[RMDB]
RNA sequence: GGGAACGACUCGAGUAGAGUCGAAAAGAUAUGGACGUACACGAGCGACGAUCUCGGAAACGAGGGAGCUCUGUGUCACGUCCUAAGUCAAAAGAUUUCAGCUCCGCUUCGGCGGAGCUGAAAUCAACUAUUACACAAGGUUCGCCUUGUGUAAUAGAAAAGAAACAACAACAACAAC
Reactivity to DMS in 0.01 (KOAc 150mM, MgCl2 10mM, bicine 150mM(pH8.5), 24C), signal-to-noise 4, nucleotides 027 to 126: g000a050u000a300u010g010g000a000c000g020u000a010c000a010c010g000a010g020c000g010a070c240g000a030u010c000u010c000g000g000a110a080a210c010g000a020g000g000g010a030g010c000u000c000u000g040u000g010u010c220a000c010g000u000c000c000u000a000a060g010u010c050a080a100a120a090g000a010u000u010u000c000a020g010c000u000c000c000g000c010u000u010c190g030g010c000g010g000a000g000c000u000g000a000a000a000u000c000a040a160
Reactivity to 2A3 in 0.01 (KOAc 150mM, MgCl2 10mM, bicine 150mM(pH8.5), 24C), signal-to-noise 2, nucleotides 027 to 126: g040a010u080a040u180g000g020a000c000g000u000a010c020a000c000g020a000g010c000g300a300c000g000a050u020c000u000c020g050g030a090a080a030c000g000a000g010g010g000a010g020c000u020c080u060g000u010g000u000c040a000c010g000u000c000c000u000a040a010g040u000c040a020a020a030a110g010a000u010u000u020c000a000g000c000u010c000c020g020c080u110u180c290g110g030c000g060g000a020g000c000u000g000a000a000a000u000c000a000a000